Annotation
The data come from the RNA Mapping Database (RMDB), library OK1LIB. This 177-nucleotide RNA was probed chemically with DMS and 2A3. Values are in units of 0.01, from 0 to 300, in steps of 10. The reactions ran in a buffer of 150 mM KOAc, 10 mM MgCl2 and 150 mM bicine (pH 8.5), at 24 C.
RNA sequence: GGGAACGACUCGAGUAGAGUCGAAAACAGAGCUAACCUGCUCAGUGAUCCGAACUGCCCUGAGGACAUAUCAGCCUCGGACCUGCAGGGAGCUGUUGAGAGGUACGUGCAUGAAGUCAUAGAACGAAUGUAUGUGCGUGUUCGCACGCACAUACAUAAAAGAAACAACAACAACAAC
Reactivity to DMS in 0.01 (KOAc 150mM, MgCl2 10mM, bicine 150mM(pH8.5), 24C), signal-to-noise 2, nucleotides 027 to 126: c120a070g010a050g000c000u000a020a040c070c030u010g000c070u020c050a010g030u050g020a030u000c000c060g020a040a180c030u020g000c050c130c040u000g000a070g020g010a080c120a170u040a100u010c190a110g000c100c020u000c000g000g000a020c050c050u010g040c070a000g010g010g000a090g010c020u010g010u000u000g040a120g010a050g000g000u020a020c120g000u000g020c000a070u020g000a110a140g000u000c040a050u000a080g030a100a100c060g030a130
Reactivity to 2A3 in 0.01 (KOAc 150mM, MgCl2 10mM, bicine 150mM(pH8.5), 24C), signal-to-noise 3, nucleotides 027 to 126: c050a010g060a000g110c050u040a020a160c030c010u030g040c000u000c060a000g030u000g060a100u000c020c020g070a130a080c080u070g040c030c000c060u060g020a040g000g040a060c060a030u200a040u120c050a040g000c010c010u020c000g050g060a050c030c040u010g010c000a020g000g100g000a030g000c010u010g070u180u030g040a070g030a050g020g020u130a060c040g020u030g050c020a070u230g060a050a020g040u150c030a090u080a090g180a170a020c050g080a140